[RMDB]
Structure probing data (2A3) for a 177-nucleotide construct. For 2A3 the reverse transcriptase was SuperScript II with manganese. The data come from the RNA Mapping Database (RMDB), library OK1LIB. The RNA was probed in 150 mM KOAc, 10 mM MgCl2 and 150 mM bicine (pH 8.5) at 24 C.
RNA sequence: GGGAACGACUCGAGUAGAGUCGAAAAUUAUCGCCGGGAGCGUCCUAGGAAUGCUCAUAAUAUUAGCUCUAGUAGGAACCUGUGUUGGAUUCUACUACAGGUAAAGUCAGCGCGCUAGUUCACGAAAGUCACUAUGCUGCUUCGGCAGCAUAGUGACAAAAGAAACAACAACAACAAC
Reactivity to 2A3 in 0.01 (KOAc 150mM, MgCl2 10mM, bicine 150mM(pH8.5), 24C), signal-to-noise 1, nucleotides 027 to 126: u200u080a110u000c020g000c000c030g020g020g010a080g000c000g050u000c000c000u000a000g000g110a140a050u250g000c070u060c000a070u140a000a300u300a140u060u110a000g030c000u000c000u000a060g000u070a050g060g140a220a300c000c000u220g000u000g050u220u040g170g120a190u000u120c000u000a000c000u000a000c000a000g000g020u000a020a020a020g000u120c170a050g040c050g000c000g080c040u000a000g000u100u000c020a000c000g030a090a000a000